[RMDB]
RNA sequence: GGGAACGACUCGAGUAGAGUCGAAAAUCUGAAUUCGUUCAGACAUCGAUCCUAAGUCAGCUCGGGCCCAGUGGAGCCUGUAAUCGGAAACGAUUAAAGGCGAUGAAACUGGGUCUCUAGCGUGGCUGAUAUGGAGUACACUGCCAUUCGUGGCAAAAAUCCUACAACAUUUCGAUGUUGUAGGAUUAAAAGAAACAACAACAACAAC
Reactivity to 2A3 in 0.01 (KOAc 150mM, MgCl2 10mM, bicine 150mM(pH8.5), 24C), signal-to-noise 2, nucleotides 027 to 156: u050c010u000g020a020a000u130u060c190g040u050u000c060a000g000a030c020a060u150c070g140a090u040c000c000u050a080a000g020u000c020a020g000c000u020c020g000g000g030c000c000c000a010g000u020g000g000a000g060c000c000u040g150u170a000a010u000c000g000g000a040a040a070c020g000a000u000u000a120a050a000g000g000c040g050a270u010g020a000a010a010c000u000g000g000g000u030c000u000c010u010a000g020c040g080u020g000g000c010u010g000a010u010a100u300g030g010a020g020u060a070c150a060c140u120g000c010c010a030u070u090c300g120u160g000g010c080a000a050a000
Reactivity to DMS in 0.01 (KOAc 150mM, MgCl2 10mM, bicine 150mM(pH8.5), 24C), signal-to-noise 2, nucleotides 027 to 156: u000c010u000g000a020a040u000u010c230g050u000u000c010a020g000a050c080a220u000c050g030a120u000c000c010u000a060a110g010u000c010a090g000c020u000c090g010g020g020c000c000c020a010g000u000g000g000a160g010c000c010u010g010u000a000a010u010c000g020g010a180a190a270c010g030a040u000u000a020a010a010g000g030c000g010a090u020g000a070a090a080c010u010g020g050g030u010c000u000c010u000a040g020c060g020u000g030g030c030u020g010a080u000a190u020g000g000a120g000u000a090c100a110c080u000g010c000c000a080u000u030c230g050u000g020g000c000a000a060a120

Overview: Conditions: 150 mM KOAc, 10 mM MgCl2 and 150 mM bicine (pH 8.5), 24 C. This 207-nucleotide RNA was probed chemically with 2A3 and DMS. It was measured as part of the RMDB library RNAMAK. DMS adducts were read by reverse transcription with MarathonRT. Values cover nucleotides 27 to 156.